RNA sequence: GGGAACGACUCGAGUAGAGUCGAAAAUUCACGCAUAUCAAUCGCAUAAAUACGUUGCAUAAGGCGUACUGCAUCGGCGUUGAUGGCAGGCUUUACUUCUGUCCCUGCUGAAUAACUCUCAAAAACAAAUCAUGUAACAAUUCGUUGUUACAUGAUUAAAAGAAACAACAACAACAAC
Reactivity to 2A3 in 0.01 (KOAc 150mM, MgCl2 10mM, bicine 150mM(pH8.5), 24C), signal-to-noise 9, nucleotides 027 to 126: u030u010c020a020c070g020c020a030u040a020u160c040a070a020u130c040g010c050a050u110a150a140a010u100a050c030g020u020u060g080c090a080u100a230a080g070g000c020g020u020a030c040u040g030c010a040u070c070g070g000c010g010u010u040g040a030u030g020g000c010a000g020g000c010u110u150u100a070c000u070u090c010u020g030u040c010c010c020u030g010c020u020g010a040a030u070a080a040c010u010c010u010c050a080a060a040a010a030c050a010
Reactivity to DMS in 0.01 (KOAc 150mM, MgCl2 10mM, bicine 150mM(pH8.5), 24C), signal-to-noise 9, nucleotides 027 to 126: u000u000c050a050c110g020c040a080u010a060u010c060a050a060u010c070g040c040a110u000a080a100a130u000a110c040g010u010u000g010c140a080u010a100a120g000g000c030g010u000a060c100u000g010c090a050u000c070g010g010c030g020u000u000g010a040u000g010g010c040a050g000g010c170u000u000u000a060c110u000u000c050u000g010u000c050c100c060u000g010c040u000g000a060a050u000a070a100c170u000c030u010c040a050a060a070a080a090c230a090

This 177-nucleotide RNA was probed chemically with 2A3 and DMS. The reactions ran in a buffer of 150 mM KOAc, 10 mM MgCl2 and 150 mM bicine (pH 8.5), at 24 C.